[RMDB]
RNA sequence: GGGAACGACUCGAGUAGAGUCGAAAAGUUUGACUGUUCGCAGUCAAACAAAGGCUAAGGUAUAUAAAUCUGCUAGUUACCUAAGCCAAAAACGAGCAGAAAAAACGGCGUACUUCGGUACGCCGAACUAUAAACGAUCCUUCGGGAUCGUUUAUAGAAAAGAAACAACAACAACAAC
Reactivity to DMS in 0.01 (KOAc 150mM, MgCl2 10mM, bicine 150mM(pH8.5), 24C), signal-to-noise 2, nucleotides 027 to 126: g020u000u000u000g000a000c010u000g020u000u000c230g040c000a030g000u000c000a000a000a000c000a040a110a080g000g000c000u000a130a010g000g010u000a020u030a090u000a070a100a110u000c000u000g000c000u000a220g000u000u000a000c000c010u000a100a050g010c010c000a040a040a060a130a120c230g000a080g000c000a000g000a000a110a050a130a070a130c010g020g000c000g000u000a000c000u000u010c190g040g000u000a000c000g000c000c000g000a000a010
Reactivity to 2A3 in 0.01 (KOAc 150mM, MgCl2 10mM, bicine 150mM(pH8.5), 24C), signal-to-noise 2, nucleotides 027 to 126: g000u010u010u000g010a000c000u000g040u030u080c220g060c130a000g000u010c000a000a000a010c000a040a060a000g000g000c010u020a000a030g000g080u030a140u010a030u070a140a120a120u030c010u000g000c010u010a030g070u020u000a000c010c000u020a020a040g000c010c040a220a070a000a000a000c100g010a010g030c000a000g090a040a090a000a010a000a040c030g000g010c000g000u000a000c000u030u080c180g070g010u010a000c010g030c010c000g010a000a000